Structure probing data (DMS and 2A3) for a 177-nucleotide construct. The reactions ran in a buffer of 150 mM KOAc, 10 mM MgCl2 and 150 mM bicine (pH 8.5), at 24 C. The data come from the RNA Mapping Database (RMDB), library M2PK90.
RNA sequence: GGGAACGACUCGAGUAGAGUCGAAAAUUGUGGUCAACACCUUGGCGUAGUAUCCAAGGUUGUCAAGGUUCCUAUUGACUUAACAAUGAUUGAGUUUAUGUUAUGGUGUAAGGAUGGACAGGGGAAAUGUAUUCCCAACUUUCGAGUUGGGAAUACAAAAAGAAACAACAACAACAAC
Reactivity to DMS in 0.01 (KOAc 150mM, MgCl2 10mM, bicine 150mM(pH8.5), 24C), signal-to-noise 4, nucleotides 027 to 126: u010u000g020u010g010g000u000c050a090a060c060a030c000c000u010u000g000g000c270g040u000a180g010u020a120u010c010c010a000a020g010g020u000u000g010u000c100a060a080g000g020u010u010c020c030u000a070u000u010g010a040c000u010u010a070a040c030a030a040u000g000a140u000u000g020a100g000u010u000u010a060u010g010u000u000a070u000g020g000u000g000u010a060a060g000g010a090u000g000g000a040c060a110g000g000g000g000a080a080a090
Reactivity to 2A3 in 0.01 (KOAc 150mM, MgCl2 10mM, bicine 150mM(pH8.5), 24C), signal-to-noise 1, nucleotides 027 to 126: u030u040g010u030g020g020u040c010a000a030c000a030c050c000u030u000g000g000c010g070u080a060g040u060a110u050c020c020a030a000g000g010u030u040g010u000c030a020a000g070g020u010u020c000c010u000a030u000u060g040a030c000u030u070a080a000c050a050a210u110g020a150u060u100g030a060g200u050u080u040a060u130g060u040u050a090u100g100g000u040g030u080a050a040g080g040a070u100g010g020a030c020a000g060g030g000g040a000a070a080